[RMDB]
RNA sequence: GGGAACGACUCGAGUAGAGUCGAAAAACGAGUCGUACGCGACUCGGAUGGUAUUGUCGGCGUAAAAGAACAAGACGUCACCGGACGCGACCGGGCUAAAAAGCGAAACGUCAUCUACGGAUGACGAAAAACGGACCUGGGUUCGCCCAGGUCCGAACACUAAUUUAGUGUUCGCACUAAAUUAGUGAAAAGAAACAACAACAACAAC
Reactivity to 2A3 in 0.01 (KOAc 150mM, MgCl2 10mM, bicine 150mM(pH8.5), 24C), signal-to-noise 6, nucleotides 027 to 156: a010c010g000a000g000u000c010g010u050a030c230g010c010g100a000c000u010c000g000g000a070u080g030g090u150a140u110u210g130u120c070g000g030c020g020u060a050a070a090a080g110a110a090c090a110a040g100a030c020g010u010c010a010c020c010g000g020a020c000g000c000g010a010c000c000g030g000g000c020u060a020a030a000a000a000g010c020g020a110a030a010c010g000u000c000a010u000c000u010a020c170g090g000a000u000g000a000c000g020a070a010a000a000a000c010g000g000a000c000c000u000g050g000g000u040u060c140g080c020c010c000a000g000g000u010c000c000g000a000a000
Reactivity to DMS in 0.01 (KOAc 150mM, MgCl2 10mM, bicine 150mM(pH8.5), 24C), signal-to-noise 3, nucleotides 027 to 156: a090c000g000a020g010u000c010g030u000a100c160g060c030g010a030c000u020c000g010g000a070u000g020g030u000a040u000u000g000u000c040g030g020c070g030u000a040a110a080a150g020a090a140c090a160a120g000a060c070g010u000c030a160c040c030g000g000a100c060g030c100g020a120c030c010g010g000g020c080u000a040a040a050a090a060g020c020g000a100a060a130c010g020u000c000a010u010c000u010a130c300g060g010a020u000g000a020c020g000a010a010a030a090a120c010g030g000a050c000c000u000g020g030g020u000u000c280g000c010c010c010a010g000g010u000c000c000g000a010a050

An RNA of 207 nucleotides, treated with 2A3 and DMS and read out base by base. The data come from the RNA Mapping Database (RMDB), library M2RFPK. Reactivities are given for positions 27 through 156.